[RMDB]
RNA sequence: GGGAACGACUCGAGUAGAGUCGAAAAACAAGUGGUGGUAGACCGCCACUCUAAGGGGACGCCUUUAGAAGAAGAGGCUAGGGGGUAUUCCGGUGUGGGAUACUUAGUAAUAUGCAACGCUAAUUGCUCAAGGAUAGAUGAUUCGUCAUCUAUCCAACAUUGAGAUGAUAUUCGUAUCAUCUCAAUGAAAAGAAACAACAACAACAAC
Reactivity to DMS in 0.01 (KOAc 150mM, MgCl2 10mM, bicine 150mM(pH8.5), 24C), signal-to-noise 3, nucleotides 027 to 156: a080c100a070a050g000u000g000g030u000g000g030u000a150g000a130c030c000g000c000c010a040c020u000c030u000a050a060g030g000g020g040a120c200g020c010c020u000u010u000a070g010a110a170g000a110a130g000a120g030g020c030u000a090g000g000g000g030g010u000a100u000u000c020c010g040g020u010g010u000g020g020g000a020u000a040c030u000u000a050g010u010a090a140u010a080u000g020c050a060a080c030g020c030u000a070a120u000u000g010c010u000c110a080a160g000g030a020u000a020g010a030u010g010a050u000u000c260g010u010c010a010u000c000u010a020u010c000c000a040a050
Reactivity to 2A3 in 0.01 (KOAc 150mM, MgCl2 10mM, bicine 150mM(pH8.5), 24C), signal-to-noise 7, nucleotides 027 to 156: a000c070a070a020g010u020g010g000u010g010g030u080a040g070a140c020c000g000c010c000a010c010u000c010u040a060a030g010g000g020g020a020c050g060c000c000u050u050u070a100g040a190a010g050a050a010g040a060g030g000c030u040a030g060g010g000g000g000u030a050u070u030c050c030g110g050u150g030u150g080g000g000a010u020a060c000u030u030a030g030u050a030a120u080a070u270g030c020a040a020c070g020c080u090a120a100u060u060g010c030u050c160a120a090g000g000a000u000a000g000a000u010g000a000u030u070c130g060u000c060a000u000c000u000a000u000c000c000a000a000

Source information:
The record gives the reactivity of an RNA of 207 nucleotides to DMS and 2A3. Reactivities are given for positions 27 through 156. The DMS profile rests on 7,748 reads. The reactions ran in a buffer of 150 mM KOAc, 10 mM MgCl2 and 150 mM bicine (pH 8.5), at 24 C. For DMS the reverse transcriptase was MarathonRT.